[RMDB]
RNA sequence: GGGAACGACUCGAGUAGAGUCGAAAAUCUGCAUCAUACUUUUGCAAGAUAGGUAAGGAACAGAAGUGUUGCAUGUGCAAUAGACGCGCUGCAGCGUACUCUUCACCUCUGCAAUCUUAUGCCUGCUAACGUCAGGUGUUCGCACCUGACAAAAGAAACAACAACAACAAC
Reactivity to 2A3 in 0.01 (KOAc 150mM, MgCl2 10mM, bicine 150mM(pH8.5), 24C), signal-to-noise 9, nucleotides 027 to 129: u020c010u030g000c000a030u010c010a020u060a100c010u040u050u030u010g010c030a130a110g030a150u120a040g020g050u050a050a070g070g040a090a060c030a100g130a180a050g060u040g000u070u010g000c040a060u260g010u000g010c010a020a080u090a220g160a090c100g010c000g000c040u070g010c010a010g000c010g020u080a110c010u010c000u020u010c040a010c000c000u000c010u020g010c020a010a010u000c000u020u030a010u030g020c010c040u020g000c040u070a060a030c060
Reactivity to DMS in 0.01 (KOAc 150mM, MgCl2 10mM, bicine 150mM(pH8.5), 24C), signal-to-noise 5, nucleotides 027 to 129: u000c000u000g030c060a050u080c110a040u020a090c040u050u040u040u020g000c000a080a080g030a060u080a000g030g020u000a040a030g000g050a070a170c050a100g050a070a130g020u040g030u000u050g000c020a060u100g060u000g000c050a070a110u060a080g070a100c150g020c020g030c080u050g060c130a060g020c010g000u040a090c070u050c020u000u000c060a030c000c000u000c000u000g010c030a030a020u010c000u000u000a000u000g000c080c040u040g000c060u030a100a090c190

Structure probing data (2A3 and DMS) for a 170-nucleotide construct. For 2A3 the reverse transcriptase was SuperScript II with manganese. For 2A3, 30,071 sequencing reads were counted. The DMS profile rests on 21,120 reads.